[RMDB]
RNA sequence: GGGAACGACUCGAGUAGAGUCGAAAAGAAGUCGUUGAACUGACAUCAGCCGAGGAGCGUUUCGAGAGCCUCAAAUCCGUUUUCGGCGAGCGGAUCGGCCUUAUUCAUGGCCGCAUGAGCGGCGCGACCGAGUAUAAAUGUUCGCAUUUAUACUCGGAAAAGAAACAACAACAACAAC
Reactivity to DMS in 0.01 (KOAc 150mM, MgCl2 10mM, bicine 150mM(pH8.5), 24C), signal-to-noise 7, nucleotides 027 to 126: g010a090a070g010u000c020g020u000u000g030a140a130c130u000g010a070c050a070u000c050a110g010c040c030g010a120g010g000a070g010c070g000u000u000u010c040g010a110g010a120g010c030c020u000c060a060a120a070u000c010c010g000u000u000u000u000c050g010g030c060g000a070g000c010g000g000a030u000c030g000g000c010c040u000u010a080u010u010c160a090u010g010g010c010c010g010c170a070u010g010a120g030c080g010g000c020g010c100g000a300
Reactivity to 2A3 in 0.01 (KOAc 150mM, MgCl2 10mM, bicine 150mM(pH8.5), 24C), signal-to-noise 6, nucleotides 027 to 126: g100a040a020g030u040c040g040u110u130g060a110a060c070u070g040a020c010a110u080c070a030g030c010c020g020a060g030g080a090g030c080g010u040u090u080c130g050a110g010a020g080c010c000u050c020a060a080a020u030c010c010g000u010u010u010u110c030g040g000c020g000a010g000c010g000g000a020u010c000g020g000c000c000u150u220a200u110u170c120a110u180g060g000c010c000g000c020a060u180g020a030g050c050g030g000c030g000c000g040a030
The record gives the reactivity of an RNA of 177 nucleotides to DMS and 2A3. For DMS, 9,389 sequencing reads were counted. The data come from the RNA Mapping Database (RMDB), library OK2TRN. Reactivities are rounded to 0.1 and cut off at 0 and 3. For DMS the reverse transcriptase was MarathonRT.